[RMDB]
RNA sequence: GGGAACGACUCGAGUAGAGUCGAAAACUCAGAUCUGGUAGUAGGUAGAACUUCAAGCCCUCGUAUGCGUUUGGUAGUGUAACGCUCCUAACUGCCAACACGAUUAGGAGAACGAAGAGAAGAGGCAUAUUUGUAUACAGUUCGCUGUAUACAAAUAAAAAGAAACAACAACAACAAC
Reactivity to DMS in 0.01 (KOAc 150mM, MgCl2 10mM, bicine 150mM(pH8.5), 24C), signal-to-noise 9, nucleotides 027 to 126: c020u000c030a110g010a120u000c050u000g010g010u000a040g010u000a040g010g010u000a070g010a090a100c060u000u000c050a080a150g010c070c030c010u000c090g010u000a060u010g010c080g010u000u000u000g010g010u000a030g010u000g010u010a060a130c120g010c020u000c010c010u000a070a030c020u000g000c020c020a030a050c170a090c050g000a070u000u000a050g000g010a050g010a070a090c120g010a070a060g000a090g010a080a070g010a050g010g010c100a170
Reactivity to 2A3 in 0.01 (KOAc 150mM, MgCl2 10mM, bicine 150mM(pH8.5), 24C), signal-to-noise 6, nucleotides 027 to 126: c020u010c020a040g030a170u050c030u080g050g010u050a050g010u010a020g020g060u030a030g050a140a050c010u070u040c090a080a070g020c000c030c000u040c040g130u130a080u180g060c010g020u000u040u020g060g000u050a050g010u010g030u120a090a050c080g010c050u010c000c000u030a070a080c010u020g020c010c010a010a010c050a010c020g080a070u070u120a060g010g050a040g010a070a030c080g040a070a040g030a010g020a120a010g020a010g030g010c020a020
This 177-nucleotide RNA was probed chemically with DMS and 2A3.
For DMS the reverse transcriptase was MarathonRT.
Reactivities are given for positions 27 through 126.
The RNA was probed in 150 mM KOAc, 10 mM MgCl2 and 150 mM bicine (pH 8.5) at 24 C.
Values are in units of 0.01, from 0 to 300, in steps of 10.